[RMDB]
RNA sequence: GGGAACGACUCGAGUAGAGUCGAAAAAGCGCUAGAUAUGUACAUGGGUAUUCCCCCUUAUCUGUGUACUAUAUCUGUUUGGACUUGCGUGAUAGGGGGAGUAGUGCAAGUUUGGGUGGUGCGCGAAGUGUAUAUUAUUAUUCGUAAUAAUAUACACAAAAGAAACAACAACAACAAC
Reactivity to 2A3 in 0.01 (KOAc 150mM, MgCl2 10mM, bicine 150mM(pH8.5), 24C), signal-to-noise 2, nucleotides 027 to 126: a000g030c030g000c030u030a000g010a020u000a010u050g010u010a000c000a000u010g000g000g030u060a000u020u060c000c000c010c010c000u030u060a050u110c000u010g000u000g000u000a000c030u050a000u010a000u000c010u000g250u040u150u140g010g000a020c000u000u050g000c000g020u020g040a070u150a130g000g000g000g000g000a030g030u020a000g000u000g020c030a020a000g000u000u000u020g060g000g040u170g010g000u060g000c020g010c000g070a070a020